[RMDB]
RNA sequence: GGGAACGACUCGAGUAGAGUCGAAAAAUUUACGACUCUCAAGCGAAGCGUGUGCUAGCAUGCUCGAUAGCACUAAACAAAACAGGAAACUGAAAAUCGAGCAAUCGCUAGAGUCGUUCCCAUACAAAACUGUAGUUUGGUUCGCCAAACUACAGUUAAAAGAAACAACAACAACAAC
Reactivity to DMS in 0.01 (KOAc 150mM, MgCl2 10mM, bicine 150mM(pH8.5), 24C), signal-to-noise 1, nucleotides 027 to 126: a150u000u020u040a150c030g050a000c000u000c000u000c020a270a000g000c010g000a020a170g000c060g000u000g000u000g030c000u000a030g000c070a300u000g000c020u010c000g000a050u000a020g060c080a050c000u000a090a210a190c150a120a120a040a170c010a010g000g010a050a120a250c060u000g000a110a050a080a080u000c050g000a010g060c000a060a080u000c070g020c050u000a110g010a020g000u020c000g000u000u000c000c000c000a000u000a040c090a090a010
Reactivity to 2A3 in 0.01 (KOAc 150mM, MgCl2 10mM, bicine 150mM(pH8.5), 24C), signal-to-noise 1, nucleotides 027 to 126: a000u150u120u060a060c020g000a000c000u020c000u010c010a000a020g020c010g030a040a000g060c010g000u220g120u100g160c010u000a010g020c010a030u080g020c000u000c000g040a030u000a010g100c020a000c070u130a070a060a010c050a040a010a050a030c000a000g100g000a010a090a080c030u080g020a060a000a000a190u000c010g000a000g000c000a000a120u010c020g000c010u010a010g000a000g030u010c000g000u000u010c000c000c000a010u040a010c000a000a090